An RNA of 177 nucleotides, treated with 2A3 and DMS and read out base by base. For DMS the reverse transcriptase was MarathonRT. For 2A3, 903 sequencing reads were counted.
[RMDB]
RNA sequence: GGGAACGACUCGAGUAGAGUCGAAAAAGGGCACCUACACCGCGCGGCUGCGCGGACGCCCGCUCGACCUCACCUACAAGGAAUUCGAGCUGCUCAAGUACCUCGCCCAGCACGCGGGCCGGGUGUACACCCUAUCCCACUUCGGUGGGAUAGGGUGAAAAGAAACAACAACAACAAC
Reactivity to 2A3 in 0.01 (KOAc 150mM, MgCl2 10mM, bicine 150mM(pH8.5), 24C), signal-to-noise 1, nucleotides 027 to 126: a000g010g000g020c020a040c040c010u100a050c070a040c030c000g110c010g000c090g300g040c150u190g000c100g010c030g000g010a010c080g000c000c040c000g000c010u000c000g010a030c000c020u030c030a120c010c040u190a090c100a140a040g070g010a050a050u060u050c000g020a030g020c020u030g040c030u040c110a090a070g050u050a090c000c000u040c010g030c020c020c020a020g000c110a050c080g020c000g040g000g010c070c030g030g000g030u050g010u090a030
Reactivity to DMS in 0.01 (KOAc 150mM, MgCl2 10mM, bicine 150mM(pH8.5), 24C), signal-to-noise 1, nucleotides 027 to 126: a250g000g000g030c000a110c170c200u010a160c300a290c060c010g080c000g050c020g020g020c140u010g050c170g060c060g010g020a020c230g010c050c010c030g000c010u000c000g000a120c020c020u010c110a050c010c010u000a150c160a110a060g000g000a200a190u000u000c020g020a020g010c010u010g000c030u070c050a070a140g000u000a020c020c000u000c260g000c000c000c000a050g020c080a020c140g020c100g030g000g000c050c040g000g000g030u000g000u000a080